The record gives the reactivity of an RNA of 207 nucleotides to 2A3 and DMS. Conditions: 150 mM KOAc, 10 mM MgCl2 and 150 mM bicine (pH 8.5), 24 C. Reactivities are given for positions 27 through 156.
RNA sequence: GGGAACGACUCGAGUAGAGUCGAAAACAAACGUGAACUUUCGAGUUCACGUUUGCCCUCCGUGCUAGAUGGGGAGGUAGCGGUGCCCUGUAACCUGCAACCCGCUAUAGCAGGGUCGAAUUCCGAGGGAUUCUACUUAGUUCGCUAAGUAGAAUCCACAAAGCAUCUGUUUCGACAGAUGCUUUGUAAAAGAAACAACAACAACAAC
Reactivity to 2A3 in 0.01 (KOAc 150mM, MgCl2 10mM, bicine 150mM(pH8.5), 24C), signal-to-noise 3, nucleotides 027 to 156: c000a010a010a010c000g000u000g000a000a000c010u060u070u170c290g110a030g010u000u000c010a000c010g040u000u000u000g020c000c000c020u020c020c020g100u100g080c050u090a060g000a030u030g000g000g010g010a020g000g010u010a010g010c000g040g030u060g060c010c000c010u020g030u040a040a030c010c000u000g020c000a120a300c000c000c020g000c060u200a150u060a290g000c000a010g030g000g000u000c020g040a110a160u180u070c060c060g040a090g030g010g000a000u000u000c000u010a000c000u000u010a030g020u080u060c260g030c140u010a000a000g000u000a000g000a000a000u020c000c010
Reactivity to DMS in 0.01 (KOAc 150mM, MgCl2 10mM, bicine 150mM(pH8.5), 24C), signal-to-noise 2, nucleotides 027 to 156: c000a000a020a000c000g030u000g000a030a000c000u000u000u000c300g010a060g040u010u000c000a010c000g000u000u000u000g000c020c030c020u000c010c080g020u010g000c040u010a120g010a070u010g010g010g010g010a150g000g020u000a040g010c000g000g000u010g000c020c070c030u010g010u000a070a070c010c000u000g000c000a040a080c060c010c010g010c030u000a300u000a070g010c000a030g040g020g020u010c020g000a150a210u020u010c030c020g010a150g050g020g000a020u000u000c000u010a000c000u010u000a010g020u000u020c300g060c000u010a000a020g020u000a010g010a010a000u010c000c050